[RMDB]
This 177-nucleotide RNA was probed chemically with DMS. The DMS profile rests on 1,158 reads. The RNA was probed in 150 mM KOAc, 10 mM MgCl2 and 150 mM bicine (pH 8.5) at 24 C. For DMS the reverse transcriptase was MarathonRT.

RNA sequence: GGGAACGACUCGAGUAGAGUCGAAAAUGAGACCUCACCUCUACCAAAAAAGAAAAAAAAAUUAAUCAAGUGUGGUGGUGGCACAUCUGUUGUCCCAGUACUUGGGAGGCUGUGGUGGGAGGAUCACAUAAGUUGUUUUGUUCGCAAAACAACUUAUAAAAGAAACAACAACAACAAC
Reactivity to DMS in 0.01 (KOAc 150mM, MgCl2 10mM, bicine 150mM(pH8.5), 24C), signal-to-noise 2, nucleotides 027 to 126: u010g010a090g000a190c040c000u010c030a080c050c000u000c000u000a190c020c040a000a060a020a130a070a100g040a040a030a020a020a090a090a100a110a070u000u000a070a100u000c020a030a060g000u000g000u000g000g010u000g030g010u000g020g010c050a010c070a090u000c100u000g020u010u000g000u000c000c000c000a060g010u000a030c100u000u000g000g000g000a110g000g020c120u020g020u000g000g020u000g000g000g000a060g020g000a110u000c080a050c170